[RMDB]
RNA sequence: GGGAACGACUCGAGUAGAGUCGAAAACCUCACUACAUUUUACUGUUCCUAAAGAAUUUGUGACACGUACAGUAAAACGUAUUGCAAGGUUUAUCAGUUCCUAUAAACAGGUAAAUAACAAUAUAUGAAAAGCAAAGACUGUUCGCAGUCUUUGCAACUGUUAUCUGUCCUUCGGGACAGAUAACAGAAAAGAAACAACAACAACAAC
Reactivity to 2A3 in 0.01 (KOAc 150mM, MgCl2 10mM, bicine 150mM(pH8.5), 24C), signal-to-noise 3, nucleotides 027 to 156: c010c000u010c010a000c010u000a000c010a050u010u010u000u000a000c000u000g010u030u090c070c030u120a090a180a040g110a170a160u220u300u300g110u120g090a090c090a000c100g030u050a010c000a000g000u020a020a000a000a020c010g000u000a000u020u030g000c090a060a040g030g010u020u040u020a140u070c020a030g020u010u000c010c000u040a120u140a070a050a010c060a010g150g010u100a130a060a050u210a180a010c040a060a050u200a040u070a020u240g070a090a060a050a050g000c000a000a000a000g010a000c000u000g000u080u090c250g020c090a000g000u020c000u010u000u000g000c000a000a000

Conditions: 150 mM KOAc, 10 mM MgCl2 and 150 mM bicine (pH 8.5), 24 C. The record gives the reactivity of an RNA of 207 nucleotides to 2A3. It was measured as part of the RMDB library M2RFOK.